[RMDB]
RNA sequence: GGGAACGACUCGAGUAGAGUCGAAAACAGUGUCUAGCCAGGCCUUGACAAGCUAGCCGGAGGAGCGCCUAGGAACCCGAGCCGGAGCUCAGCGAGCGCAGCCUGCACGCCCGCCUCGCGUCCCGGGCGAGACUACAGGCUUCGGCCUGUAGUCUCGAAAAGAAACAACAACAACAAC
Reactivity to DMS in 0.01 (KOAc 150mM, MgCl2 10mM, bicine 150mM(pH8.5), 24C), signal-to-noise 3, nucleotides 027 to 126: c050a060g000u040g000u000c000u010a140g000c020c030a100g000g000c030c050u020u000g000a110c200a110a140g010c040u000a100g040c050c030g020g020a100g000g000a140g000c090g000c010c020u000a110g000g000a090a100c060c070c000g000a170g030c070c040g000g000a110g020c050u010c070a080g000c040g000a080g000c090g000c050a080g000c060c020u000g000c080a060c090g020c030c020c010g030c140c000u000c060g020c190g010u000c050c000c040g000g000g010
Reactivity to 2A3 in 0.01 (KOAc 150mM, MgCl2 10mM, bicine 150mM(pH8.5), 24C), signal-to-noise 2, nucleotides 027 to 126: c060a010g060u060g030u080c040u030a010g030c000c060a040g000g030c010c020u070u070g020a050c040a100a010g020c010u080a020g030c010c020g070g010a040g010g020a090g030c000g010c010c040u040a090g020g060a060a050c040c000c010g000a010g000c010c010g020g000a070g010c020u040c090a010g010c020g040a010g000c040g000c020a000g020c000c020u070g010c020a010c020g010c010c000c000g000c020c000u030c010g000c000g030u020c000c010c010g000g010g010